Chemical mapping of a 177-nucleotide RNA with DMS and 2A3. Reactivities are given for positions 27 through 126. The data come from the RNA Mapping Database (RMDB), library OK2TST. The 2A3 profile rests on 4,943 reads.
[RMDB]
RNA sequence: GGGAACGACUCGAGUAGAGUCGAAAACGACAUAGCCCAUGGCGACCGGGAAACCGGCGGAAGGGCCAAAGCCGCCCGAGGUGACGGUGCCGAUCUGGCGGCCACUUUCGUCGAAAAGGUCGGCCCAGCCUAUAUGCUGAUUCGUCAGCAUAUAGGCAAAAGAAACAACAACAACAAC
Reactivity to DMS in 0.01 (KOAc 150mM, MgCl2 10mM, bicine 150mM(pH8.5), 24C), signal-to-noise 3, nucleotides 027 to 126: c080g000a070c100a140u000a140g000c010c010c010a120u020g010g000c020g000a090c040c050g000g000g000a080a080a110c140c010g000g000c010g010g010a060a040g010g000g020c010c040a050a110a120g000c010c000g020c010c000c060g010a090g020g010u000g010a050c050g000g020u010g000c020c000g000a140u010c110u010g000g000c000g020g010c000c030a030c020u000u000u000c030g000u000c020g000a090a070a090a090g020g000u000c020g030g010c010c010c150a120
Reactivity to 2A3 in 0.01 (KOAc 150mM, MgCl2 10mM, bicine 150mM(pH8.5), 24C), signal-to-noise 3, nucleotides 027 to 126: c030g120a030c020a090u190a040g040c000c010c010a030u090g080g000c030g030a180c020c020g000g000g100a110a100a040c020c010g000g000c010g000g000a030a020g010g010g000c000c010a040a100a010g000c020c000g020c000c010c010g040a120g040g060u170g030a070c090g050g080u190g050c010c000g030a210u050c060u090g000g000c000g000g000c010c000a090c010u020u050u040c010g010u000c010g010a020a030a030a000g000g020u000c000g000g000c000c000c000a000

The RNA was probed in 150 mM KOAc, 10 mM MgCl2 and 150 mM bicine (pH 8.5) at 24 C.